Chemical mapping of a 177-nucleotide RNA with 2A3 and DMS.
2A3 adducts were read by reverse transcription with SuperScript II with manganese.
Conditions: 150 mM KOAc, 10 mM MgCl2 and 150 mM bicine (pH 8.5), 24 C.
It was measured as part of the RMDB library OK1LIB.
The DMS profile rests on 1,246 reads.
The 2A3 profile rests on 760 reads.
2A3 is a SHAPE reagent: it acylates the 2'-hydroxyl of flexible nucleotides of all four kinds.
[RMDB]
RNA sequence: GGGAACGACUCGAGUAGAGUCGAAAACAUACAGUAUUUUGGUCAGGAAGAGAAAGUGGCCAUUUACACUGAAUGAGUUGCAUUCUGAUAAUGUCUUAUCUCUUAUACGUAGAAUAAAUUUGAAAGAAUUACACAGGGACUUCGGUCCCUGUGUAAUAAAAGAAACAACAACAACAAC
Reactivity to 2A3 in 0.01 (KOAc 150mM, MgCl2 10mM, bicine 150mM(pH8.5), 24C), signal-to-noise 2, nucleotides 027 to 126: c040a010u260a100c060a030g010u020a210u000u060u000u060g020g000u020c010a040g060g210a300a080g140a040g010a010a260a000g060u030g000g000c000c000a000u000u000u040a080c080a010c000u030g000a030a060u020g000a030g040u070u070g100c040a100u030u030c030u010g010a060u120a220a080u030g130u000c010u010u060a140u070c030u010c010u000u080a050u010a240c050g080u110a010g070a010a080u060a130a060a050u140u100u070g130a090a090a040g080a000
Reactivity to DMS in 0.01 (KOAc 150mM, MgCl2 10mM, bicine 150mM(pH8.5), 24C), signal-to-noise 1, nucleotides 027 to 126: c120a040u030a050c060a100g000u000a040u050u000u000u010g020g030u080c020a030g000g030a140a010g000a170g040a190a110a180g030u000g000g070c030c000a000u000u020u030a170c150a120c060u020g010a090a010u000g000a130g000u000u010g000c020a030u000u000c000u000g000a040u000a030a000u030g000u030c040u020u000a030u000c040u010c000u000u000a030u000a150c140g010u000a110g000a070a030u000a070a040a070u010u010u000g000a010a040a010g000a160